[RMDB]
RNA sequence: GGGAACGACUCGAGUAGAGUCGAAAAAUACAUUCCUGUGCCGGCAAUACAGUGUGUAUGGAGGUCUCAAUGGCUCGGAAGUGCCAGCAAACCAGCGUAGAUAUUAGCAGACGUAUGGGCGUAAGACAAAAGAGAAUGAUGUUCGCAUCAUUCUCAAGUUAAGUUAAAAGUUCGCUUUUAACUUAACAAAAGAAACAACAACAACAAC
Reactivity to DMS in 0.01 (KOAc 150mM, MgCl2 10mM, bicine 150mM(pH8.5), 24C), signal-to-noise 5, nucleotides 027 to 156: a100u010a070c030a110u000u000c300c010u000g020u010g020c000c020g030g010c060a110a110u000a060c020a080g000u000g020u000g010u000a060u000g020g010a140g000g000u000c010u010c030a070a120u010g000g010c010u000c040g020g000a130a130g020u000g010c030c010a080g010c050a060a110a080c010c010a100g000c050g010u000a100g010a150u000a100u000u000a070g020c080a140g000a040c050g020u000a060u000g010g020g020c020g010u000a040a110g000a100c070a060a040a080a150g000a040g010a040a030u030g010a030u000g000u000u000c290g010c000a020u000c000a020u000u000c000u000c000a020a050
Reactivity to 2A3 in 0.01 (KOAc 150mM, MgCl2 10mM, bicine 150mM(pH8.5), 24C), signal-to-noise 9, nucleotides 027 to 156: a000u120a010c040a040u050u040c010c000u010g020u020g030c040c040g080g020c050a060a030u070a110c020a050g040u030g010u010g020u100a060u050g050g030a040g040g060u000c020u000c040a060a150u070g020g000c020u030c070g050g070a070a030g040u020g060c010c010a020g030c050a050a040a040c020c010a000g020c000g030u040a030g060a130u090a090u180u170a050g050c050a030g010a060c020g040u070a140u100g020g010g000c020g020u040a060a030g070a060c070a060a100a010a020g000a000g000a000a000u000g000a000u000g010u050u060c140g000c070a000u000c000a000u000u000c000u000c000a000a000
Record summary:
This 207-nucleotide RNA was probed chemically with DMS and 2A3. For DMS, 12,968 sequencing reads were counted. The 2A3 profile rests on 11,589 reads. The data come from the RNA Mapping Database (RMDB), library M2RFPK. The reactions ran in a buffer of 150 mM KOAc, 10 mM MgCl2 and 150 mM bicine (pH 8.5), at 24 C.